RNA sequence: GGGAACGACUCGAGUAGAGUCGAAAAUAGAAAUGUAAAGCUGGAAUCCAAAAUCAUGAAAAAUGGAUCCCUGAACUCUCUUAAUUAACCUCCUUGUAGUGCUCUGAUUGAGAUUCAGAAUAUUGACGACAUUCUACCAUUUCGAUGGUAGAAUGUCAAAAGAAACAACAACAACAAC
Reactivity to 2A3 in 0.01 (KOAc 150mM, MgCl2 10mM, bicine 150mM(pH8.5), 24C), signal-to-noise 1, nucleotides 027 to 126: u180a010g020a040a200a040u090g040u150a000a140a020g030c070u070g080g050a080a030u000c000c000a100a100a060a010u130c040a100u070g170a020a180a000a000a000u030g000g000a000u020c000c020c000u020g030a040a020c020u010c000u000c000u100u090a050a010u020u210a300a300c000c020u000c050c060u030u170g110u220a000g010u020g040c010u020c000u050g000a030u050u050g020a020g000a000u020u020c010a000g030a050a050u070a050u000u090g080a070c050
Reactivity to DMS in 0.01 (KOAc 150mM, MgCl2 10mM, bicine 150mM(pH8.5), 24C), signal-to-noise 1, nucleotides 027 to 126: u010a090g030a120a110a080u030g000u010a010a100a120g000c090u010g020g000a050a050u000c020c020a010a090a060a040u000c180a030u000g010a020a040a020a090a080u000g010g000a040u000c000c000c050u000g010a090a040c100u010c010u010c030u000u040a070a060u030u000a030a080c060c060u000c060c100u010u000g000u020a270g010u000g030c070u010c030u000g030a030u000u000g000a030g030a170u000u000c010a020g000a070a140u010a080u010u000g000a180c260